[RMDB]
RNA sequence: GGGAACGACUCGAGUAGAGUCGAAAAAACCAAAUAGGGCAGGUUAUUGCAAAGAGACAUCCGUGUUUAUACCCAAAAUAAUCCGUAGCCAACACAUAAGCAACUUGAAGUAUGAAGGGUAUAUGUCUUACCUGGCAGUGUUCGCACUGCCAGGUAAAAAAGAAACAACAACAACAAC
Reactivity to DMS in 0.01 (KOAc 150mM, MgCl2 10mM, bicine 150mM(pH8.5), 24C), signal-to-noise 1, nucleotides 027 to 126: a120a020c020c010a010a060a190u030a110g000g000g010c060a030g000g030u000u020a230u060u000g000c260a010a140a130g000a010g000a030c000a000u000c070c140g000u050g080u000u000u000a000u000a000c010c050c000a030a000a130a020u000a000a060u000c000c210g000u000a020g070c000c020a050a020c300a150c140a180u090a100a080g000c080a000a070c000u000u000g030a070a000g000u050a000u050g030a130a050g010g000g000u000a040u000a000u010g030u010c000
This 177-nucleotide RNA was probed chemically with DMS.
Values cover nucleotides 27 to 126.
The data come from the RNA Mapping Database (RMDB), library RFM100.
DMS adducts were read by reverse transcription with MarathonRT.
The RNA was probed in 150 mM KOAc, 10 mM MgCl2 and 150 mM bicine (pH 8.5) at 24 C.
For DMS, 920 sequencing reads were counted.